Chemical mapping of a 177-nucleotide RNA with DMS. Source: RMDB libraries RFM100 and RFMREP, as collected in RNAgym. Reactivities are rounded to 0.1 and cut off at 0 and 3.

RNA sequence: GGGAACGACUCGAGUAGAGUCGAAAAGGAGCGAUUGGACCACCUUGCAGUUUCAUGGCACACUCUCUCCAUUUCUCUACCGUUCAUGCAGCGGUUGAUCGAUUGGGUUGCUGGUUGAUUGAUCGAUUUUUUCUUGUAGGUUCGCCUACAAGAAAAAAAAAGAAACAACAACAACAAC
Reactivity to DMS in 0.01 (KOAc 150mM, MgCl2 10mM, bicine 150mM(pH8.5), 24C), signal-to-noise 3, nucleotides 027 to 126: g010g030a060g030c070g020a030u000u020g020g010a100c040c030a060c150c060u060u020g000c070a070g030u010u010u010c020a250u010g010g020c300a040c020a060c050u030c000u020c020u050c010c010a120u020u000u020c040u000c020u020a040c050c020g020u000u000c020a100u010g050c110a030g010c000g000g000u000u000g000a010u000c030g000a070u010u010g010g000g020u000u010g000c020u010g010g030u010u000g010a050u000u000g000a110u000c030g000a060u000